[RMDB]
RNA sequence: GGGAACGACUCGAGUAGAGUCGAAAAGAACCACCUAUUCACUUUGUACCGAGAUGUUCACCUUUAGCAAAAGACCAGUGGAUACCGGACAUGGUACUGUGGUUUUCCAAGUCUCAUACGCCGGCAAUAGGCUGGUAAAUUUCGAUUUACCAGCCUAAAAAGAAACAACAACAACAAC
Reactivity to 2A3 in 0.01 (KOAc 150mM, MgCl2 10mM, bicine 150mM(pH8.5), 24C), signal-to-noise 1, nucleotides 027 to 126: g000a050a010c000c010a020c030c070u070a200u160u160c040a030c060u070u120u070g010u090a300c020c010g020a040g040a300u090g020u040u000c060a060c020c020u030u020u090a110g100c100a030a030a020a020g040a040c030c040a020g000u020g040g020a010u010a070c000c070g020g010a000c010a000u020g020g000u040a010c000u060g000u060g010g070u020u040u060u000c020c030a040a040g110u020c040u000c050a080u060a190c100g040c000c000g100g030c020a050a090
Reactivity to DMS in 0.01 (KOAc 150mM, MgCl2 10mM, bicine 150mM(pH8.5), 24C), signal-to-noise 2, nucleotides 027 to 126: g000a070a070c000c010a040c060c230u010a120u000u000c130a020c030u000u010u000g000u000a150c040c010g000a050g020a190u010g000u000u000c050a020c000c030u000u000u010a180g020c230a040a040a060a050g000a050c070c160a110g020u010g000g010a040u000a060c030c000g010g000a040c040a010u000g000g000u030a040c180u000g000u000g020g000u000u010u010u010c010c050a110a170g050u000c020u000c060a100u000a110c160g010c020c020g000g020c140a140a190